The record gives the reactivity of an RNA of 177 nucleotides to 2A3 and DMS.
The reactions ran in a buffer of 150 mM KOAc, 10 mM MgCl2 and 150 mM bicine (pH 8.5), at 24 C.
The DMS profile rests on 1,768 reads.
The data come from the RNA Mapping Database (RMDB), library OK1LIB.

[RMDB]
RNA sequence: GGGAACGACUCGAGUAGAGUCGAAAACGUCAGAGGACGAAGUCGGUCCAUCUGCGGUAAAAGACCGACAUAGAGUUCGAAGCAGAACGAACAACCGCAGAUACACGAUUGGAGUGUGAAUGAGAGAAUAUCGUGGACCAUUCGUGGUCCACGAUAUAAAAGAAACAACAACAACAAC
Reactivity to 2A3 in 0.01 (KOAc 150mM, MgCl2 10mM, bicine 150mM(pH8.5), 24C), signal-to-noise 2, nucleotides 027 to 126: c000g030u020c050a140g070a130g300g000a020c010g000a090a010g030u000c000g000g000u000c000c000a010u000c000u000g000c000g010g020u080a070a080a020a020g030a070c000c010g000a000c000a050u230a050g210a000g000u000u020c000g020a120a000g130c160a050g120a110a000c010g000a010a000c000a000a010c000c000g000c000a000g000a000u030a020c040a000c000g140a130u050u300g100g010a130g070u040g000u100g090a150a140u180g010a030g020a020g000a110
Reactivity to DMS in 0.01 (KOAc 150mM, MgCl2 10mM, bicine 150mM(pH8.5), 24C), signal-to-noise 2, nucleotides 027 to 126: c000g030u000c030a050g000a150g040g010a030c100g000a100a120g000u030c030g000g000u000c000c140a050u000c000u000g030c030g020g000u000a090a060a150a030g000a030c060c000g000a090c000a300u020a120g000a250g000u000u000c000g020a100a100g060c190a070g020a080a070c020g030a000a110c060a220a040c000c000g010c000a000g020a000u010a060c080a060c170g040a090u000u040g020g000a260g000u000g000u000g020a070a040u000g010a170g040a100g000a200

Reactivities are given for positions 27 through 126.